[RMDB]
RNA sequence: GGGAACGACUCGAGUAGAGUCGAAAAAUGCACUGGUUCGCCAGUGCAUGAUUACCGAGAAAGAACCUCGGUAUAAAAGUGCAACCCUUGGAAACAAGGGAAUUCCGAACCGAUUCGUCGGUUCGAAUAAACGGGGGUAUUUCGAUACCCCCGUUUAAAAAGAAACAACAACAACAAC
Reactivity to DMS in 0.01 (KOAc 150mM, MgCl2 10mM, bicine 150mM(pH8.5), 24C), signal-to-noise 2, nucleotides 027 to 126: a030u000g000c000a000c000u010g000g000u030u040c240g010c020c000a020g000u000g010c000a000u000g030a100u020u000a010c000c000g020a020g010a110a140a150g020a170a140c200c020u000c000g020g000u000a020u000a050a090a110a070g000u000g020c140a090a140c010c020c000u010u000g000g000a120a130a190c010a010a000g010g000g000a040a040u000u010c080c000g010a020a000c000c000g020a020u000u040c260g000u000c010g010g000u000u000c000g010a020a050